Structure probing data (2A3) for a 177-nucleotide construct.
Conditions: 150 mM KOAc, 10 mM MgCl2 and 150 mM bicine (pH 8.5), 24 C.
The 2A3 profile rests on 415 reads.
RNA sequence: GGGAACGACUCGAGUAGAGUCGAAAAAGGAGUACCGUGAUGACGAUGAACGAGCAGACCUUGCAGGUCAGCCCGAUGAGUUGAUGCGUUGGGCGAUCACUCAGGAACACGCUGCCGACAGGUGUGCGGGUCCGGAGCCGUUCGCGGCUCCGGACCCAAAAGAAACAACAACAACAAC
Reactivity to 2A3 in 0.01 (KOAc 150mM, MgCl2 10mM, bicine 150mM(pH8.5), 24C), signal-to-noise 1, nucleotides 027 to 126: a020g000g000a000g010u070a050c000c000g000u030g060a230u030g090a020c000g000a000u170g000a120a000c030g000a000g000c000a060g080a080c060c000u180u200g010c040a050g000g000u090c020a040g020c000c000c000g090a020u000g000a030g070u230u090g150a000u030g070c100g090u180u200g300g080g000c020g000a000u000c020a000c000u050c000a010g010g030a000a100c100a000c140g030c000u000g020c000c000g000a040c020a020g030g000u120g080u010g090c000